This 177-nucleotide RNA was probed chemically with DMS and 2A3. High 2A3 reactivity points to a flexible backbone, as in loops and unpaired stretches. It was measured as part of the RMDB library TTRDEL.
RNA sequence: GGGAACGACUCGAGUAGAGUCGAAAAGAUAUGGACUGACAGGGAGCUCACUCGGAAACGAGCGAGCAUCGAUCUGUACAGUCCUAAGUCAAACCGUUCAAACGACGUUCGCGUCGUUUGAACGGAAUCAACGGAACGUGUUCGCACGUUCCGUUGAAAAAGAAACAACAACAACAAC
Reactivity to DMS in 0.01 (KOAc 150mM, MgCl2 10mM, bicine 150mM(pH8.5), 24C), signal-to-noise 1, nucleotides 027 to 126: g000a080u010a300u000g000g000a000c000u000g000a010c000a010g000g000g010a070g020c000u000c000a000c000u010c010g010g010a070a140a140c000g000a000g000c020g000a010g030c000a090u020c140g030a050u010c000u000g010u000a150c030a000g050u000c000c000u020a010a050g010u010c030a150a110a250c020c000g000u000u000c000a050a000a000c000g030a000c000g000u000u030c190g030c020g050u000c000g030u010u000u000g070a000a000c000g000g000a010a040
Reactivity to 2A3 in 0.01 (KOAc 150mM, MgCl2 10mM, bicine 150mM(pH8.5), 24C), signal-to-noise 1, nucleotides 027 to 126: g040a030u040a040u180g000g010a010c000u000g000a000c000a020g000g020g000a010g080c000u020c000a030c020u000c020g010g080a000a040a060c010g000a010g010c010g000a000g020c020a080u040c030g000a050u000c010u010g050u150a230c020a010g000u010c000c000u000a030a000g070u020c030a090a020a140c040c000g000u020u000c030a000a000a000c000g020a000c000g020u060u050c300g000c060g150u040c000g060u010u000u000g010a000a000c000g010g020a010a030